[RMDB]
RNA sequence: GGGAACGACUCGAGUAGAGUCGAAAAUCACAGUUCGCUGUGAAAGCCUUCCUAAGUCAAACAACAGCCGUAUGCAUCGCAUCGAUCUAUCGGAAACGAUAGGGAGCGAUGUUUGACGGACAUGUUUGAUAUGGAUCAAGUUGCACUUCGGUGCAAAGCCGGAUUACUUUUUCGAAAGUAAUCCGGCAAAAGAAACAACAACAACAAC
Reactivity to 2A3 in 0.01 (KOAc 150mM, MgCl2 10mM, bicine 150mM(pH8.5), 24C), signal-to-noise 2, nucleotides 027 to 156: u020c010a000c010a020g060u100u070c180g050c080u000g030u000g080a100a090a030g080c000c000u000u010c010c010u020a100a060g050u010c000a010a000a010c040a070a060c040a150g000c000c000g000u010a030u010g010c000a000u000c000g010c030a200u210c020g080a080u000c000u020a010u000c120g160g000a130a010a020c030g000a000u000a060g000g000g000a020g000c010g000a000u000g000u000u030u050g090a000c000g030g040a070c000a130u020g000u000u020u000g000a000u010a020u090g010g000a020u140c100a090a090g200u090u000g000c000a000c020u030u110c290g050g000u000g000c030a050a030a000
This 207-nucleotide RNA was probed chemically with 2A3. The 2A3 profile rests on 1,106 reads. The reactions ran in a buffer of 150 mM KOAc, 10 mM MgCl2 and 150 mM bicine (pH 8.5), at 24 C. Source: RMDB library RNAMAK, as collected in RNAgym.